[RMDB]
RNA sequence: GGGAACGACUCGAGUAGAGUCGAAAAGAAGACGUGACGAAAAGUCACGAAAAAGAGCUAGCAAGUGGCAGCUAGCAAAGAUCGAAAGAUCAAAUGCCACAAAGUGCAGGGAGACCUGCACAAAAGACGGUAUGAUGCCAUUCGUGGCAUCAUACCGAAAAGAAACAACAACAACAAC
Reactivity to 2A3 in 0.01 (KOAc 150mM, MgCl2 10mM, bicine 150mM(pH8.5), 24C), signal-to-noise 2, nucleotides 027 to 126: g150a110a010g100a010c040g000u010g000a000c020g070a050a170a000a220g000u000c000a000c000g060a000a010a000a020a000g170a020g000c010u000a000g000c040a300a040g020u010g000g000c030a000g020c000u010a000g030c090a000a140a000g000a000u030c010g010a040a000a030g010a020u010c000a010a010a010u010g000c000c000a010c020a000a060a000g000u020g000c000a000g000g040g010a080g070a110c000c000u010g030c010a000c000a010a000a000a000g060a010

Structure probing data (2A3) for a 177-nucleotide construct. It was measured as part of the RMDB library OK1LIB.